[RMDB]
This 177-nucleotide RNA was probed chemically with 2A3 and DMS.
RNA sequence: GGGAACGACUCGAGUAGAGUCGAAAAAGCACCAGGACAACGAUUGCGUCCUAGCACAUCUGGCAUACGGUACGGCUACUGUCUUGUGCACCAUAAAAAUGUCAUGCUGCUACAACGCAAGCAAGUACCGUUGACUUCUUUUCGAAGAAGUCAACGGAAAAGAAACAACAACAACAAC
Reactivity to 2A3 in 0.01 (KOAc 150mM, MgCl2 10mM, bicine 150mM(pH8.5), 24C), signal-to-noise 3, nucleotides 027 to 126: a010g040c030a050c020c040a030g050g000a030c020a100a020c110g130a100u000u110g010c000g010u050c010c030u010a010g010c010a020c010a110u110c160u130g000g020c030a050u080a070c080g010g010u030a040c050g020g030c010u080a110c080u150g100u150c040u120u160g020u040g040c030a010c020c010a040u250a100a140a070a010a000u060g060u050c020a060u020g010c040u000g010c000u030a070c050a080a000c070g000c020a000a030g040c030a070a020g030u010a090
Reactivity to DMS in 0.01 (KOAc 150mM, MgCl2 10mM, bicine 150mM(pH8.5), 24C), signal-to-noise 2, nucleotides 027 to 126: a130g010c110a090c070c010a090g010g010a070c060a020a120c170g000a110u000u000g000c020g010u000c030c250u000a050g020c100a050c100a030u000c160u010g020g020c070a050u000a110c160g010g000u000a060c020g000g000c040u000a050c140u010g020u000c130u000u020g020u000g040c020a100c040c050a070u030a000a070a020a070a030u010g040u010c130a020u000g050c190u030g000c010u000a070c180a020a020c170g000c020a070a060g000c020a050a090g050u010a030

The DMS profile rests on 923 reads.